RNA sequence: GGGAACGACUCGAGUAGAGUCGAAAAUGAGAGUGGAAAGCGUCGUUUUGUUGAUAUUGAUGAUGAUUUUCACGUUACUCUAAAGGAGGGAACGGACGUGUAUGAUAACUAUCAAAAGUUAAAGUCCUAACGACCAUACAUUCGUGUAUGGUCGUUAAAAAGAAACAACAACAACAAC
Reactivity to 2A3 in 0.01 (KOAc 150mM, MgCl2 10mM, bicine 150mM(pH8.5), 24C), signal-to-noise 2, nucleotides 027 to 126: u130g000a030g010a000g010u030g010g020a060a000a030g030c020g020u030c050g000u010u030u030u030g130u040u170g070a120u030a060u280u110g020a040u000g000a000u020g020a030u000u030u020u030c020a020c020g000u050u120a100c010u040c010u060a110a090a010g100g020a040g020g010g010a060a070c060g030g000a000c050g060u090g020u070a040u050g040a060u030a070a040c040u010a050u220c090a080a070a020a020g020u030u040a080a090a010g020u000c040c000
Reactivity to DMS in 0.01 (KOAc 150mM, MgCl2 10mM, bicine 150mM(pH8.5), 24C), signal-to-noise 5, nucleotides 027 to 126: u020g000a020g020a160g020u000g010g010a010a020a040g010c030g020u000c020g020u010u000u000u000g020u000u010g010a170u020a100u000u010g000a020u000g010a030u010g010a070u000u010u000u000c000a010c010g020u000u010a120c020u000c010u010a070a090a160g010g010a050g010g000g020a100a050c140g000g010a020c040g020u010g010u000a080u000g010a160u010a030a020c030u000a080u010c280a050a070a100a080g000u010u000a040a070a170g000u000c030c030